An RNA of 177 nucleotides, treated with DMS and 2A3 and read out base by base.

[RMDB]
RNA sequence: GGGAACGACUCGAGUAGAGUCGAAAAGUGCUGAUCGACGGCAAGCGCGUGCUGUCCUGCCUCUCGCUGAGUGCGUCCUACGACGGCUCGGAAGUCGUGACCGCCGAGGGGCUGGGCACGCCCGAGCGGUCUGGGAGAGCUUCGGCUCUCCCAGACCAAAAGAAACAACAACAACAAC
Reactivity to DMS in 0.01 (KOAc 150mM, MgCl2 10mM, bicine 150mM(pH8.5), 24C), signal-to-noise 2, nucleotides 027 to 126: g040u000g030c000u000g010a110u010c100g000a060c090g010g000c030a070a140g000c120g040c110g000u000g010c010u010g000u000c000c050u000g000c030c010u000c000u000c020g000c250u000g000a070g000u010g000c080g030u000c010c100u000a090c110g000a030c030g030g010c030u000c050g060g020a120a080g000u000c020g010u000g000a090c020c020g020c100c020g010a040g020g010g000g000c050u020g000g010g010c000a030c060g010c050c000c000g010a040g020c110
Reactivity to 2A3 in 0.01 (KOAc 150mM, MgCl2 10mM, bicine 150mM(pH8.5), 24C), signal-to-noise 2, nucleotides 027 to 126: g040u040g000c010u060g010a150u190c060g070a060c030g020g000c030a100a070g110c080g020c070g110u080g020c020u020g020u060c000c000u000g020c010c020u000c000u000c010g000c130u130g040a050g080u200g210c080g000u000c030c040u100a060c150g010a000c020g000g020c010u040c070g090g130a110a060g020u090c030g000u020g080a040c010c040g040c010c030g010a020g000g040g000g000c000u000g000g000g000c000a000c040g010c000c010c000g000a060g000c050
Reactivities are given for positions 27 through 126. For 2A3 the reverse transcriptase was SuperScript II with manganese.